[RMDB]
RNA sequence: GGGAACGACUCGAGUAGAGUCGAAAAGGGUGGCUGCCACCACCUGAUGCAGGGUGCGGCUUCCACCAUACCCAGGAGCAGCUGGCCUUGGAAGUGAGCCAUGUGACCUGCCUUCCGGGCAGACCCCCUAAAACUCUAGGUUCGCCUAGAGUUUUAGAAAAGAAACAACAACAACAAC
Reactivity to DMS in 0.01 (KOAc 150mM, MgCl2 10mM, bicine 150mM(pH8.5), 24C), signal-to-noise 9, nucleotides 027 to 126: g010g010g030u000g000g010c080u000g010c020c010a090c240c030a020c000c000u010g000a160u010g030c210a150g000g000g010u000g030c230g000g000c010u010u000c010c010a010c010c010a090u000a050c030c000c010a110g000g000a110g010c140a100g020c040u000g000g000c020c020u000u010g020g010a060a050g010u000g010a100g010c030c030a110u000g010u010g010a090c090c030u000g010c050c020u000u000c060c060g000g000g010c020a050g000a220c020c010c010c040
Reactivity to 2A3 in 0.01 (KOAc 150mM, MgCl2 10mM, bicine 150mM(pH8.5), 24C), signal-to-noise 3, nucleotides 027 to 126: g060g000g000u010g010g020c000u020g010c030c020a060c050c020a010c010c030u070g070a160u300g110c180a150g000g000g050u040g020c030g010g010c000u020u000c000c010a000c000c010a010u070a060c010c000c020a030g070g020a080g050c090a010g020c020u130g090g040c020c030u160u300g060g020a070a060g090u150g150a030g040c030c030a130u160g100u120g100a130c000c010u040g020c030c000u040u010c040c000g000g010g000c000a000g030a070c020c000c010c000

About this RNA:
An RNA of 177 nucleotides, treated with DMS and 2A3 and read out base by base. The RNA was probed in 150 mM KOAc, 10 mM MgCl2 and 150 mM bicine (pH 8.5) at 24 C. The 2A3 profile rests on 4,023 reads. The DMS profile rests on 16,666 reads.